[RMDB]
RNA sequence: GGGAACGACUCGAGUAGAGUCGAAAACUGCAGGUCAACGGAGUGUCUUCAGAUCAGCUAUUGCAGAAGAAAGGUCAGCCAAGCGCUCUGGGCCUGCUCGACUGUAUAUAGGAGCUUCUGAUUUCAACCAGAAGCUAACUCUCUCCGAAACAAUGAGUAAUACCCCAUUAUUCGUAAUGGGGUAUUAAAAAGAAACAACAACAACAAC
Reactivity to DMS in 0.01 (KOAc 150mM, MgCl2 10mM, bicine 150mM(pH8.5), 24C), signal-to-noise 2, nucleotides 027 to 156: c010u000g020c030a030g010g000u000c030a040a070c040g000g000a050g000u000g010u000c000u020u000c030a230g020a100u000c050a250g000c020u010a130u010u000g020c080a090g020a100a220g020a060a150a090g010g020u000c030a070g010c110c040a070a130g030c030g020c020u010c020u000g030g010g000c010c010u010g080c010u000c040g010a100c040u000g020u000a080u010a140u000a150g010g010a110g000c000u000u000c010u000g010a080u000u010u000c200a140a070c010c000a010g000a030a020g000c000u000a000a040c040u000c050u000c030u000c010c040g000a140a110a090c080a070a080u000g000a130g000
Reactivity to 2A3 in 0.01 (KOAc 150mM, MgCl2 10mM, bicine 150mM(pH8.5), 24C), signal-to-noise 3, nucleotides 027 to 156: c010u010g000c000a020g000g020u020c040a120a140c060g000g000a000g010u020g040u060c010u060u030c050a020g000a080u010c000a030g040c140u120a080u140u290g110c060a030g030a250a030g030a090a090a020g000g010u020c010a010g020c120c060a060a000g000c020g020c020u010c030u040g000g010g000c020c000u000g040c000u000c000g030a000c010u020g070u110a040u030a020u110a260g150g060a000g000c000u030u000c000u000g110a210u220u220u270c040a050a020c060c000a000g000a000a000g000c000u000a000a000c000u000c000u000c000u010c010c070g020a050a070a030c090a040a160u230g010a030g080

Structure probing data (DMS and 2A3) for a 207-nucleotide construct. The data come from the RNA Mapping Database (RMDB), library OK3TST. Conditions: 150 mM KOAc, 10 mM MgCl2 and 150 mM bicine (pH 8.5), 24 C.